RNA sequence: GGGAACGACUCGAGUAGAGUCGAAAAAGCUCGACCUCACCAUCGCGGCUCCAGGAGUGGGCCAGGCUGCGGCAACUACCGUCACCAUCACUCGCACCAUCAACGGGGUGACGGAAACGGUCGUGGACAAAUAAUUCUCCUUCGGGAGAAUUAUUUGAAAAGAAACAACAACAACAAC
Reactivity to DMS in 0.01 (KOAc 150mM, MgCl2 10mM, bicine 150mM(pH8.5), 24C), signal-to-noise 5, nucleotides 027 to 126: a060g010c040u000c040g010a070c050c010u000c080a090c060c050a110u000c080g000c050g020g030c010u010c020c040a150g000g010a110g030u010g020g000g030c030c040a060g000g000c020u000g020c020g000g020c040a050a030c050u000a140c000c000g000u000c030a030c000c010a100u000c090a080c080u000c030g010c100a180c080c120a090u010c150a080a110c120g010g000g000g020u000g010a010c000g000g000a000a040a140c300g000g000u000c030g010u000g000g010a230
Reactivity to 2A3 in 0.01 (KOAc 150mM, MgCl2 10mM, bicine 150mM(pH8.5), 24C), signal-to-noise 3, nucleotides 027 to 126: a000g030c010u000c030g030a070c000c000u040c010a060c030c010a040u070c030g050c050g060g010c020u030c040c020a130g070g060a070g110u210g010g030g020c020c000a020g060g010c010u030g000c010g000g000c010a030a030c010u060a040c000c000g010u000c010a000c010c010a090u150c020a030c080u070c030g100c030a130c060c040a130u220c060a050a110c050g010g000g000g070u010g000a000c000g000g000a020a000a020c030g000g010u010c000g010u020g000g010a010
An RNA of 177 nucleotides, treated with DMS and 2A3 and read out base by base.
Values cover nucleotides 27 to 126.
The RNA was probed in 150 mM KOAc, 10 mM MgCl2 and 150 mM bicine (pH 8.5) at 24 C.
High 2A3 reactivity points to a flexible backbone, as in loops and unpaired stretches.
It was measured as part of the RMDB library OK2TRN.